[RMDB]
RNA sequence: GGGAACGACUCGAGUAGAGUCGAAAACCUGGUUUAGGGUUCCAGGCUAGCCCUAUCUAUAGGUCGAGAUGCGAGCGCUUAAGCUCAAAUUGAGUGGCUGAGUUAGUGGUGAACGUAUCCCUAUGUUAAAACGGUAGCUGCUUCGGCAGCUACCGAAGUCUACAUAGAUGUUCGCAUCUAUGUAGACAAAAGAAACAACAACAACAAC
Reactivity to DMS in 0.01 (KOAc 150mM, MgCl2 10mM, bicine 150mM(pH8.5), 24C), signal-to-noise 2, nucleotides 027 to 156: c000c010u000g020g050u000u000u000a040g040g020g030u000u020c020c050a060g050g040c040u010a300g000c010c040c010u000a000u010c030u010a180u010a110g020g020u000c050g000a250g020a020u000g000c300g010a050g000c000g000c300u000u000a090a160g070c020u010c020a020a140a060u000u000g010a130g020u000g030g010c020u010g000a120g010u010u000a040g030u010g020g060u010g030a120a070c080g000u000a120u000c000c000c000u010a170u000g010u010u000a060a090a140a150c030g030g000u000a030g010c030u000g000c020u010u010c230g040g040c000a040g080c000u000a000c000c000g000a010a030
Reactivity to 2A3 in 0.01 (KOAc 150mM, MgCl2 10mM, bicine 150mM(pH8.5), 24C), signal-to-noise 3, nucleotides 027 to 156: c000c010u000g020g020u050u060u070a030g000g020g000u070u020c010c020a030g010g010c020u030a040g020c000c010c000u000a010u030c020u040a170u110a130g060g000u050c050g040a020g010a170u020g020c000g000a010g000c050g040c200u260u300a140a060g000c000u000c010a020a030a030u010u050g020a040g050u190g030g000c010u010g010a010g020u020u020a040g020u100g220g000u040g040a060a020c030g000u060a080u120c020c000c010u010a030u060g070u030u100a080a090a030a010c010g000g020u000a000g000c000u010g000c020u030u030c110g060g010c000a000g020c000u000a000c000c010g000a000a000
Source: RMDB library M2RFPK, as collected in RNAgym. Structure probing data (DMS and 2A3) for a 207-nucleotide construct.